[RMDB]
RNA sequence: GGGAACGACUCGAGUAGAGUCGAAAAACUUGGCAUUUCGUUAAGUCCCACCUAGUCUCAAGCCUGUUGGUCAUCUGUUACUUCUGAAAUGUUAUAUAUCCUUGGUAAGAAUUAUCGUCGGACUCGAAUUAGGUCAUAGGUUCGCCUAUGACCUAAUAAAAGAAACAACAACAACAAC
Reactivity to 2A3 in 0.01 (KOAc 150mM, MgCl2 10mM, bicine 150mM(pH8.5), 24C), signal-to-noise 2, nucleotides 027 to 126: a000c030u040u030g060g000c020a080u110u130u100c040g010u070u100a050a010g100u070c000c000c030a040c020c010u080a030g020u020c010u020c070a040a020g000c000c020u100g080u100u080g060g000u060c010a050u020c040u030g070u090u070a020c010u070u090c020u040g030a030a020a030u070g030u180u000a040u020a020u000a040u130c010c000u000u050g000g030u080a060a040g030a070a100u100u030a070u160c070g040u000c020g040g020a030c010u030c030g000a030
Reactivity to DMS in 0.01 (KOAc 150mM, MgCl2 10mM, bicine 150mM(pH8.5), 24C), signal-to-noise 2, nucleotides 027 to 126: a150c060u000u000g000g010c030a080u010u000u040c090g010u000u010a050a040g020u000c010c000c040a100c100c050u000a040g020u010c020u010c030a080a170g020c030c020u000g000u010u000g010g000u000c050a020u000c040u020g000u020u030a060c030u000u000c030u000g000a020a050a060u000g000u020u020a120u000a070u010a090u010c020c020u000u010g010g000u040a050a070g000a070a060u020u050a030u000c070g000u000c040g030g010a170c010u000c050g000a150